[RMDB]
RNA sequence: GGGAACGACUCGAGUAGAGUCGAAAAAUUUGAUUGCCCUCGCUGUGGAUUUAAGUGCUGCUACAGGCAUUUCCAUAGAAGCUAUAGUUACAGGGGAGGCUUUAGCAGCUUUAGAGGCUGAAGUGACUCUCUAAACCUGUUUCGACAGGUUUAGAGAAAAAGAAACAACAACAACAAC
Reactivity to DMS in 0.01 (KOAc 150mM, MgCl2 10mM, bicine 150mM(pH8.5), 24C), signal-to-noise 3, nucleotides 027 to 126: a140u010u010u010g010a150u000u010g020c010c010c010u000c090g000c020u000g000u010g000g010a270u010u020u000a040a030g000u000g010c020u000g010c020u010a060c300a070g010g020c060a030u000u000u000c010c000a070u010a060g000a170a090g020c120u010a070u010a120g020u000u010a090c130a150g000g000g000g000a040g000g010c010u000u000u000a010g010c000a020g010c020u000u000u010a040g010a060g020g020c000u000g000a090a050g000u000g000a110c160
This 177-nucleotide RNA was probed chemically with DMS. The DMS profile rests on 2,764 reads. Source: RMDB library OK2TST, as collected in RNAgym. Values cover nucleotides 27 to 126. The RNA was probed in 150 mM KOAc, 10 mM MgCl2 and 150 mM bicine (pH 8.5) at 24 C.